[RMDB]
RNA sequence: GGGAACGACUCGAGUAGAGUCGAAAAACGUUACAGUUAAUUAUAACUGCAAACAAUAACAAUUCUUACGCUGUAGCUGCCUAAACACCAGCAUAGCGUGAUCCGUCUGACUUCACCCAAGGGUUAGAUCCGGGUCUCAAAUUAAUUGGGUUACGUUUAUACCUCUCCAGUUCGCUGGAGAGGUAUAAAAAGAAACAACAACAACAAC
Reactivity to 2A3 in 0.01 (KOAc 150mM, MgCl2 10mM, bicine 150mM(pH8.5), 24C), signal-to-noise 1, nucleotides 027 to 156: a000c060g010u030u030a010c050a020g010u000u010a100a150u300u170a190u090a300a060c000u010g050c130a090a070a020c030a050a070u220a080a030c100a020a090u170u090c050u130u120a000c000g000c000u010g040u060a080g000c000u000g000c000c000u030a060a030a000c000a020c010c010a000g000c000a000u020a000g000c000g020u000g010a010u000c020c060g010u010c010u000g000a000c000u000u020c080a010c000c000c000a000a030g020g030g000u020u020a000g010a090u000c140c120g010g000g090u000c030u010c180a070a210a080u270u250a060a030u020u010g010g000g080u010u080a070c050g000u000u000
Record summary: Structure probing data (2A3) for a 207-nucleotide construct. For 2A3 the reverse transcriptase was SuperScript II with manganese. The 2A3 profile rests on 463 reads. The reactions ran in a buffer of 150 mM KOAc, 10 mM MgCl2 and 150 mM bicine (pH 8.5), at 24 C. The data come from the RNA Mapping Database (RMDB), library ARCHII.